[RMDB]
RNA sequence: GGGAACGACUCGAGUAGAGUCGAAAAGAGCUUAGGGGAAUAGUGACAUGGUAGAACAUGUCAUGUAAUUCCUAAGCAAGGUUGGGAACCUAUCUCAUGUUCUACUAUGGGAUCACAUUCCAACCUAGAUAGUAUUGAUUUUCGAAUCAGUGCUAUCAAAAGAAACAACAACAACAAC
Reactivity to 2A3 in 0.01 (KOAc 150mM, MgCl2 10mM, bicine 150mM(pH8.5), 24C), signal-to-noise 9, nucleotides 027 to 126: g100a020g000c000u010u010a010g000g010g010g060a050a050u060a080g010u000g000a000c000a000u010g010g020u060a030g020a120a020c000a000u000g000u000c000a000u010g000u020a020a030u020u000c000c000u000a000a000g000c010a000a010g010g000u000u010g010g000g010a020a040c010c010u010a030u010c010u000c000a010u030g090u180u150c130u180a140c030u090a020u010g010g000g020a020u020c030a040c010a050u020u000c000c000a000a000c000c000u000a030
Reactivity to DMS in 0.01 (KOAc 150mM, MgCl2 10mM, bicine 150mM(pH8.5), 24C), signal-to-noise 9, nucleotides 027 to 126: g010a130g010c000u000u000a010g010g000g010g000a050a070u020a170g010u000g000a010c000a010u010g000g010u000a170g000a130a160c010a000u010g000u000c010a000u010g010u020a100a110u010u010c000c000u000a010a010g000c020a090a030g000g010u000u000g000g000g000a050a070c120c090u020a070u010c020u000c000a010u000g000u020u040c200u050a090c150u040a010u000g000g000g000a060u000c160a080c130a180u000u000c000c000a020a010c000c000u000a050
Chemical mapping of a 177-nucleotide RNA with 2A3 and DMS. The DMS profile rests on 64,734 reads. Conditions: 150 mM KOAc, 10 mM MgCl2 and 150 mM bicine (pH 8.5), 24 C. For 2A3 the reverse transcriptase was SuperScript II with manganese. For DMS the reverse transcriptase was MarathonRT. Source: RMDB library OK1LIB, as collected in RNAgym.